[RMDB]
RNA sequence: GGGAACGACUCGAGUAGAGUCGAAAAGAUAUGGAUCCAGAACUACUGGCCGAAUACCUCAGAGCCGAUGAAAUGCUUCGGAAACGAAGCAUGGAGGCUCUGUAUUCGGCCAGCUGGAUCCUAAGUCCUAACUAUCAAGGUUCGCCUUGAUAGUUAGAAAAGAAACAACAACAACAAC
Reactivity to DMS in 0.01 (KOAc 150mM, MgCl2 10mM, bicine 150mM(pH8.5), 24C), signal-to-noise 4, nucleotides 027 to 126: g000a110u010a300u020g000g000a010u000c000c000a010g010a070a040c080u010a300c000u000g000g010c010c000g010a020a010u000a010c150c300u010c240a030g010a010g030c000c000g030a120u020g000a090a150a020u000g000c010u000u000c000g010g010a090a080a200c010g000a010a000g010c010a000u000g000g000a070g020g000c010u000c000u000g000u000a010u000u000c010g010g000c010c000a010g010c000u000g000g000a000u000c000c000u000a020a070g000u000c050
Reactivity to 2A3 in 0.01 (KOAc 150mM, MgCl2 10mM, bicine 150mM(pH8.5), 24C), signal-to-noise 2, nucleotides 027 to 126: g050a040u150a090u300g010g000a000u000c010c030a000g010a130a040c240u300a010c010u300g000g020c000c000g000a000a020u080a060c070c170u230c080a030g010a010g000c030c020g270a300u020g000a020a020a000u010g010c010u010u000c010g000g090a040a040a060c030g010a020a000g000c000a010u000g020g000a000g010g100c000u000c000u000g000u000a010u000u000c000g010g040c000c000a000g030c000u000g000g020a000u000c010c000u000a010a010g010u010c020
Record summary:
This 177-nucleotide RNA was probed chemically with DMS and 2A3. For 2A3, 3,600 sequencing reads were counted. Reactivities are given for positions 27 through 126. For DMS the reverse transcriptase was MarathonRT. The DMS profile rests on 4,734 reads.